[RMDB]
RNA sequence: GGGAACGACUCGAGUAGAGUCGAAAACAUACACAGUCCUGUCAUGAACUUUCUUCAAGCAUCAAAGUGGAAAUAGAAAGAUCCCAUAAACUAAUCUACUGGGGCUGUAUGAAAGAAUAUCAUGCGGAGGAAGGAAAUGAUUCGUCAUUUCCUUCCUAAAAGAAACAACAACAACAAC
Reactivity to DMS in 0.01 (KOAc 150mM, MgCl2 10mM, bicine 150mM(pH8.5), 24C), signal-to-noise 4, nucleotides 027 to 126: c110a050u000a070c200a090c160a160g000u000c050c020u000g000u000c020a020u000g010a030a190c020u000u000u000c010u000u000c050a120a080g000c010a080u000c060a060a090a040g010u000g000g000a020a100a040u000a040g000a110a080a140g020a120u000c060c080c020a110u000a080a060a070c030u000a020a190u000c010u000a010c010u010g000g010g010g000c000u000g030u000a020u000g000a010a020a020g010a110a120u010a060u000c000a010u000g000c060g040g010
Reactivity to 2A3 in 0.01 (KOAc 150mM, MgCl2 10mM, bicine 150mM(pH8.5), 24C), signal-to-noise 2, nucleotides 027 to 126: c030a030u240a120c100a020c020a100g100u050c020c030u090g050u250c020a020u030g030a070a070c010u040u010u000c010u000u020c020a070a070g000c010a140u080c040a230a150a020g000u030g000g020a020a170a080u050a050g030a020a070a020g060a060u040c020c020c000a050u110a050a080a020c000u000a020a020u050c000u000a020c030u010g050g050g020g000c020u010g020u090a020u070g000a000a010a000g040a050a030u090a020u170c020a000u000g010c000g040g020